[RMDB]
RNA sequence: GGGAACGACUCGAGUAGAGUCGAAAAACGAUAACGAGGCGCUCGCUAUUGCUGCGUAACUGACGGCCUGACGGUCUGACGUUACAAAGCUAAAGCGCGCUUGGACCCCACCGGGCAACAGAAGGGGAAAGGCGACCCCGUUUCGACGGGGUCGCAACAAUGUCAUUGUGUUCGCACAAUGACAUUGAAAAGAAACAACAACAACAAC
Reactivity to DMS in 0.01 (KOAc 150mM, MgCl2 10mM, bicine 150mM(pH8.5), 24C), signal-to-noise 2, nucleotides 027 to 156: a090c070g000a120u000a040a080c040g000a100g000g020c000g070c010u000c000g000c030u040a190u000u010g030c000u000g000c300g000u000a030a020c000u000g030a300c300g070g000c000c000u000g030a160c230g020g030u000c000u040g000a300c300g010u000u000a030c020a030a270a040g000c010u020a110a120a060g010c040g020c000g000c020u000u000g030g010a080c000c010c000c000a090c060c080g020g000g040c060a060a170c050a100g020a160a100g010g010g020g000a070a080a170g000g020c030g000a110c010c000c010c000g010u000u000u000c180g010a050c020g030g000g010g100u010c030g020c010a020a030
Reactivity to 2A3 in 0.01 (KOAc 150mM, MgCl2 10mM, bicine 150mM(pH8.5), 24C), signal-to-noise 3, nucleotides 027 to 156: a010c030g040a090u140a100a040c050g020a050g050g000c030g000c040u130c100g000c050u110a130u250u180g000c000u010g000c010g000u000a000a000c010u000g020a010c010g000g040c030c010u140g150a060c170g000g000u000c010u020g010a000c010g020u000u000a000c000a000a020a000g000c000u000a000a050a000g010c000g000c000g000c000u000u010g010g040a020c000c030c000c010a030c020c050g010g090g050c040a160a030c010a120g110a110a090g010g010g010g070a080a090a010g110g000c010g000a010c060c000c000c020g010u030u080u110c170g030a020c040g020g000g000g000u000c000g000c010a000a000

An RNA of 207 nucleotides, treated with DMS and 2A3 and read out base by base.
2A3 adducts were read by reverse transcription with SuperScript II with manganese.